Structure probing data (DMS) for a 177-nucleotide construct. DMS adducts were read by reverse transcription with MarathonRT. For DMS, 1,612 sequencing reads were counted. It was measured as part of the RMDB library TTRINS. The RNA was probed in 150 mM KOAc, 10 mM MgCl2 and 150 mM bicine (pH 8.5) at 24 C. Reactivities are given for positions 27 through 126.
RNA sequence: GGGAACGACUCGAGUAGAGUCGAAAAGAUAUGGACGUGUGUGUACUUCAACAGCUAAUUCCUACACAUAAGUUCGGAAACGAACUUAUGUGUAGGAAUUAGACAUGAAGACACCACGUCCUAAGUCGCUACUAUCGAAGUUCGCUUCGAUAGUAGCAAAAGAAACAACAACAACAAC
Reactivity to DMS in 0.01 (KOAc 150mM, MgCl2 10mM, bicine 150mM(pH8.5), 24C), signal-to-noise 2, nucleotides 027 to 126: g020a070u000a300u000g000g000a030c000g050u000g000u030g010u000g010u010a110c000u000u000c020a040a160c270a220g000c000u020a010a000u000u000c030c000u000a010c000a000c000a000u000a000a000g010u000u000c000g010g000a120a050a300c000g010a000a000c000u000u000a000u020g010u000g010u000a000g020g000a000a000u000u000a010g010a040c060a200u000g000a000a010g010a070c000a000c000c000a000c000g000u000c000c000u000a010a080g020u000c110